An RNA of 177 nucleotides, treated with 2A3 and read out base by base.
2A3 adducts were read by reverse transcription with SuperScript II with manganese.
The reactions ran in a buffer of 150 mM KOAc, 10 mM MgCl2 and 150 mM bicine (pH 8.5), at 24 C.
Values cover nucleotides 27 to 126.
RNA sequence: GGGAACGACUCGAGUAGAGUCGAAAAUUAACUGCUCUUGGAAAUCGUAGAUGUGUGCAAAAUCAAUCCUCACAAUAGCAAGUGAUUUUAGUUCCUCUAACUCAAAUCCAUUUACAUUGUGAACAUACGUCGUUUCUACCUUCGGGUAGAAACGACGAAAAGAAACAACAACAACAAC
Reactivity to 2A3 in 0.01 (KOAc 150mM, MgCl2 10mM, bicine 150mM(pH8.5), 24C), signal-to-noise 1, nucleotides 027 to 126: u020u020a000a000c000u000g040c000u000c000u050u040g180g010a130a090a090u230c050g000u230a020g020a050u020g040u000g060u050g150c000a040a040a040a040u090c010a000a100u030c000c030u070c090a070c000a010a000u030a000g070c000a020a020g030u050g000a000u020u000u000u000a000g000u090u110c100c000u110c120u090a000a050c010u040c150a020a080a130u000c010c000a050u000u000u110a000c000a080u140u000g060u050g070a040a000c000a090u130a130